An RNA of 177 nucleotides, treated with DMS and 2A3 and read out base by base. 2A3 adducts were read by reverse transcription with SuperScript II with manganese. Source: RMDB library OK2TST, as collected in RNAgym. DMS adducts were read by reverse transcription with MarathonRT.
RNA sequence: GGGAACGACUCGAGUAGAGUCGAAAACAUGAUGUGAUCUUUAGUAAAGCACCAAUGCUUGUUCAUGCAUCAAUGAGACGGGAUGGGAGGACAUUGAAGGACUUGCAGUAACACGGCUGUCUCCAGCUGCAAGUCGUAUUUUCGAAUACGACUUGCAAAAAGAAACAACAACAACAAC
Reactivity to DMS in 0.01 (KOAc 150mM, MgCl2 10mM, bicine 150mM(pH8.5), 24C), signal-to-noise 3, nucleotides 027 to 126: c070a080u010g010a050u000g010u020g000a070u000c020u020u000u020a100g030u010a050a050a080g000c050a080c090c100a070a110u010g000c030u000u000g000u000u000c040a080u020g010c100a060u010c060a050a050u000g010a080g010a080c070g000g010g010a070u020g000g010g000a080g000g010a080c070a070u000u000g010a070a080g000g000a030c050u010u000g020c020a020g000u010a040a080c150a100c120g020g000c050u000g010u010c060u000c040c050a090g000c160
Reactivity to 2A3 in 0.01 (KOAc 150mM, MgCl2 10mM, bicine 150mM(pH8.5), 24C), signal-to-noise 3, nucleotides 027 to 126: c020a030u090g030a010u100g050u050g030a080u040c030u070u180u030a160g030u160a110a070a000g030c010a010c130c090a150a140u130g020c020u020u050g020u080u070c070a070u150g010c000a040u030c020a040a100u090g010a020g010a080c030g040g000g050a050u060g040g000g030a050g000g040a010c000a060u030u100g070a060a020g020g010a020c020u030u080g030c000a000g040u030a080a010c030a010c110g070g000c010u020g010u030c010u000c010c000a040g040c040